[RMDB]
RNA sequence: GGGAACGACUCGAGUAGAGUCGAAAAAGAAGGAGCACGGGUGGGACAUUCCGAGGCGGCCAGAGGCGAUCCACUUAUAUGGGGUGGACUGCAUGAGCACAGCAGACUGCCUGGCAUACUUCAGCGAACUUUCGAGUUAGUUCGCUAACUCGAAAGUAAAAGAAACAACAACAACAAC
Reactivity to 2A3 in 0.01 (KOAc 150mM, MgCl2 10mM, bicine 150mM(pH8.5), 24C), signal-to-noise 2, nucleotides 027 to 126: a000g030a030a010g030g040a030g000c050a040c160g010g010g030u060g020g000g040a050c030a100u130u000c060c020g000a070g090g010c030g000g000c000c000a050g020a060g050g120c020g020a030u010c010c000a030c040u110u090a160u080a150u300g180g000g000g000u010g000g000a000c000u020g010c010a050u070g070a040g040c050a040c040a090g000c000a000g030a030c020u040g010c010c000u020g010g000c020a050u170a130c010u050u020c010a020g100c010g090a030
Reactivity to DMS in 0.01 (KOAc 150mM, MgCl2 10mM, bicine 150mM(pH8.5), 24C), signal-to-noise 3, nucleotides 027 to 126: a120g010a090a060g020g020a120g020c050a040c090g010g000g020u010g000g010g000a100c090a110u010u010c070c040g000a080g020g000c060g020g010c040c050a040g030a130g010g010c020g010a080u000c010c000a010c050u000u000a160u010a150u010g000g000g000g040u000g010g000a040c000u000g010c020a090u000g010a100g020c070a060c060a160g000c020a080g000a130c060u000g000c030c010u010g020g010c060a050u000a140c070u000u000c030a090g000c090g000a070

An RNA of 177 nucleotides, treated with 2A3 and DMS and read out base by base. The RNA was probed in 150 mM KOAc, 10 mM MgCl2 and 150 mM bicine (pH 8.5) at 24 C. For 2A3 the reverse transcriptase was SuperScript II with manganese. The DMS profile rests on 2,248 reads. Source: RMDB library OK2TST, as collected in RNAgym.